[RMDB]
Structure probing data (DMS and 2A3) for a 177-nucleotide construct.
2A3 adducts were read by reverse transcription with SuperScript II with manganese.
RNA sequence: GGGAACGACUCGAGUAGAGUCGAAAAGAUAUGGACUCCCCACCUAAGGAACUACAAACUGGUAUCGGAAACGAUACUGGUUUGCCUUAGAGGUCCUAAGUCAAAGGUUGGUGUUCGCACCAACCAACAGUCUUCGAAUGUUCGCAUUCGAAGACUGAAAAGAAACAACAACAACAAC
Reactivity to DMS in 0.01 (KOAc 150mM, MgCl2 10mM, bicine 150mM(pH8.5), 24C), signal-to-noise 2, nucleotides 027 to 126: g040a130u000a080u000g010g050a020c010u000c130c000c000c090a300c100c000u000a020a010g000g000a120a080c080u000a260c010a000a010a000c000u000g030g010u000a000u000c000g000g010a180a040a210c000g000a010u010a000c000u000g000g010u000u000u000g000c010c000u000u000a010g000a110g030g000u000c030c000u010a070a050g000u000c060a080a110a160g010g000u000u000g000g060u000g010u000u010c280g030c010a020c000c000a000a000c030c000a050a050
Reactivity to 2A3 in 0.01 (KOAc 150mM, MgCl2 10mM, bicine 150mM(pH8.5), 24C), signal-to-noise 1, nucleotides 027 to 126: g040a000u130a130u230g000g000a000c040u170c050c010c010c030a010c010c000u010a010a010g040g000a040a080c140u140a040c300a000a000a010c000u040g000g040u000a000u000c000g020g050a020a100a000c010g000a000u000a000c000u010g000g000u000u000u000g000c010c000u010u000a010g000a010g030g030u000c010c010u110a220a120g070u120c090a180a110a070g000g020u040u010g010g000u000g030u040u060c280g020c120a000c000c000a000a000c000c000a000a010

It was measured as part of the RMDB library TTRDEL.
For 2A3, 1,635 sequencing reads were counted.
For DMS, 870 sequencing reads were counted.